The data come from the RNA Mapping Database (RMDB), library OK1LIB. The record gives the reactivity of an RNA of 177 nucleotides to DMS and 2A3. For DMS, 22,304 sequencing reads were counted. Conditions: 150 mM KOAc, 10 mM MgCl2 and 150 mM bicine (pH 8.5), 24 C. DMS adducts were read by reverse transcription with MarathonRT.
RNA sequence: GGGAACGACUCGAGUAGAGUCGAAAAAGGCGUAUGACGAAGCGUAAGGAGCCACACGACUCAACAGCCCGAUAGAAGCGGAUACGAGCUAGCUGUCAAAGCAAAAUUGAGAUUGCACAGCGUACGCAAAUUUAUUUAUAUUCGUAUAAAUAAAUUUAAAAGAAACAACAACAACAAC
Reactivity to DMS in 0.01 (KOAc 150mM, MgCl2 10mM, bicine 150mM(pH8.5), 24C), signal-to-noise 9, nucleotides 027 to 126: a080g010g000c020g020u010a030u020g010a070c070g010a110a150g000c040g000u010a070a110g010g000a180g000c030c040a050c080a100c060g010a080c050u000c050a060a080c130a150g000c040c030c080g010a070u020a060g010a120a070g000c020g010g010a080u020a060c100g000a090g000c030u010a100g010c020u000g000u010c080a050a080a120g010c050a030a030a080a150u020u020g000a120g010a120u000u010g000c040a050c060a060g010c020g010u020a040c090g010c030
Reactivity to 2A3 in 0.01 (KOAc 150mM, MgCl2 10mM, bicine 150mM(pH8.5), 24C), signal-to-noise 7, nucleotides 027 to 126: a000g100g010c020g010u080a070u110g060a080c050g030a080a000g040c010g030u060a030a060g080g030a020g010c030c000a020c000a000c030g120a050c020u030c050a010a070c010a060g030c010c000c010g030a010u060a120g080a090a010g010c030g020g010a020u040a120c030g030a030g010c030u040a030g000c010u030g040u080c040a070a050a030g010c010a050a060a070a040u130u170g020a050g030a090u010u090g010c030a020c010a030g000c010g030u050a010c040g000c000